[RMDB]
RNA sequence: GGGAACGACUCGAGUAGAGUCGAAAAACUAGGAAACUAGCUUCCAUUUAGUGGAUGUGGCACUUAAUAACAUUAGAUGGAAGAAUAAAUACUGCCACAUGAAAUGGAAUUAAGUAUAGUAGGAUACACCGAAGUGUACCUGCUAUGCUUAGUUCCACCACUAGGUACCCUUCGGGGUGCCUAGUGGAAAAGAAACAACAACAACAAC
Reactivity to 2A3 in 0.01 (KOAc 150mM, MgCl2 10mM, bicine 150mM(pH8.5), 24C), signal-to-noise 2, nucleotides 027 to 156: a020c010u000a000g020g010a060a030a030c010u000a000g000c000u000u010c000c000a000u000u000u000a010g010u000g030g020a050u030g000u000g000g000c000a050c030u130u130a120a020u140a250a010c010a010u010u020a000g010a000u010g000g000a000a000g000a000a000u100a030a080a000u250a030c190u100g000c000c010a020c010a030u090g090a060a180a040u130g000g000a000a020u000u000a000a010g010u000a000u000a000g010u000a000g000g080a180u010a010c070a010c070c200g080a240a080g000u010g000u000a010c000c000u000g000c000u000a000u000g000c000u000u000a000g000u000u020c000c000a000
Structure probing data (2A3) for a 207-nucleotide construct. The data come from the RNA Mapping Database (RMDB), library OK3TST. Conditions: 150 mM KOAc, 10 mM MgCl2 and 150 mM bicine (pH 8.5), 24 C. For 2A3 the reverse transcriptase was SuperScript II with manganese.